RNA sequence: GGGAACGACUCGAGUAGAGUCGAAAAAAAGCGAAGAGACCCGCAACAGCCGUCUGAAGCUGGCGCUGCUCACGGCGAAAACCCUCAAGCUGGGUCUUGAUACCCUCGGUAUCGAAACCGUCGAGCGCCAUGAGCUCCUCUUCGGAGGAGCUCAUGGAAAAGAAACAACAACAACAAC
Reactivity to 2A3 in 0.01 (KOAc 150mM, MgCl2 10mM, bicine 150mM(pH8.5), 24C), signal-to-noise 1, nucleotides 027 to 126: a000a000a000g050c020g000a040a010g080a000g000a060c000c000c000g000c000a050a060c020a110g000c000c060g100u080c050u230g070a090a030g020c020u050g010g020c080g050c030u010g000c000u000c050a010c000g030g000c110g080a050a030a130a150c010c020c000u090c030a040a090g000c010u110g020g010g000u000c000u010u140g020a010u010a030c000c000c050u130c150g040g000u050a050u090c060g010a140a080a000c030c040g080u120c130g000a000g020c100g000